[RMDB]
RNA sequence: GGGAACGACUCGAGUAGAGUCGAAAAGCGACAGCGCCGGAUUUUCUUGCAGGGAGUGAAAAUUUUGCAACUUCUUCACCUAAUUGCGCAUUAAGUUCCGAGAUACACACUUGUGAGCACAAGAAGCUGGGACUCAAAAGUUGCAGUUCUGUCAUCAAUUACGUUUGAGUUUCGACUCAAACGUAAUAAAAGAAACAACAACAACAAC
Reactivity to 2A3 in 0.01 (KOAc 150mM, MgCl2 10mM, bicine 150mM(pH8.5), 24C), signal-to-noise 3, nucleotides 027 to 156: g030c030g050a040c060a010g010c000g030c060c030g000g050a030u140u100u040u000c040u030u140g010c040a030g040g040g050a100g030u060g080a050a060a060a120u120u180u160u100g030c020a050a040c020u060u040c000u040u100c060a070c040c010u060a150a120u170u110g010c030g000c040a030u140u090a090a010g010u070u000c030c010g010a010g010a070u160a070c070a010c010a010c090u020u020g030u060g080a030g040c060a020c010a090a030g040a040a000g040c060u080g000g000g020a040c020u020c070a050a090a000a070g010u040u020g000c010a010g010u080u010c010u030g110u050c010a070u050c030a090
Reactivity to DMS in 0.01 (KOAc 150mM, MgCl2 10mM, bicine 150mM(pH8.5), 24C), signal-to-noise 2, nucleotides 027 to 156: g020c000g000a060c020a070g000c070g000c030c070g000g000a090u000u000u000u000c000u000u000g020c080a090g020g020g030a200g060u000g000a100a030a080a130u010u000u010u000g010c040a030a080c070u000u000c040u010u030c030a070c040c060u000a050a160u000u010g020c000g020c020a110u010u010a030a060g020u000u000c020c040g020a160g010a130u000a150c040a070c040a030c020u000u000g000u000g030a100g060c050a050c080a040a110g010a050a080g010c060u000g010g020g020a140c100u030c050a070a070a130a110g020u000u000g010c020a120g000u000u000c090u030g000u000c030a090u010c060a130